[RMDB]
RNA sequence: GGGAACGACUCGAGUAGAGUCGAAAACGGGCACCUACAACCUGCUGGUCUUCUGGGGCGGCGGAGUCAGCUUCACCGAGGGUGUGCUGUAUCACUCGCCGCUGCUCGCCAAGAUCAUCGCGAUCGAACUGAAAAUCCCAUUCGUGGGAUUUUCAGUAAAAGAAACAACAACAACAAC
Reactivity to DMS in 0.01 (KOAc 150mM, MgCl2 10mM, bicine 150mM(pH8.5), 24C), signal-to-noise 1, nucleotides 027 to 126: c120g010g000g000c040a090c020c010u020a100c120a030a100c060c020u000g050c070u010g010g010u010c010u020u010c070u000g000g030g020g010c030g030g030c010g000g010a120g020u000c020a010g000c020u000u010c010a020c040c020g010a200g030g040g060u000g010u010g010c000u020g010u020a130u010c130a070c080u030c060g010c050c010g000c000u000g000c020u000c030g000c110c120a030a030g010a030u010c030a040u000c120g000c110g000a040u000c070g000a150
Reactivity to 2A3 in 0.01 (KOAc 150mM, MgCl2 10mM, bicine 150mM(pH8.5), 24C), signal-to-noise 2, nucleotides 027 to 126: c000g010g070g020c050a020c040c020u110a050c050a090a040c020c030u060g000c030u020g030g000u010c010u070u030c080u090g010g000g070g020c020g000g000c000g070g010a000g060u020c000a010g000c000u250u200c030a000c000c020g260a260g170g190g000u000g000u020g000c010u030g070u060a110u120c070a050c060u100c030g080c010c000g010c020u000g010c000u010c010g040c060c030a040a010g000a000u030c010a000u100c080g020c020g010a020u130c030g010a050
Structure probing data (DMS and 2A3) for a 177-nucleotide construct. The DMS profile rests on 1,575 reads. The data come from the RNA Mapping Database (RMDB), library OK2TST. The RNA was probed in 150 mM KOAc, 10 mM MgCl2 and 150 mM bicine (pH 8.5) at 24 C. For 2A3 the reverse transcriptase was SuperScript II with manganese. For DMS the reverse transcriptase was MarathonRT.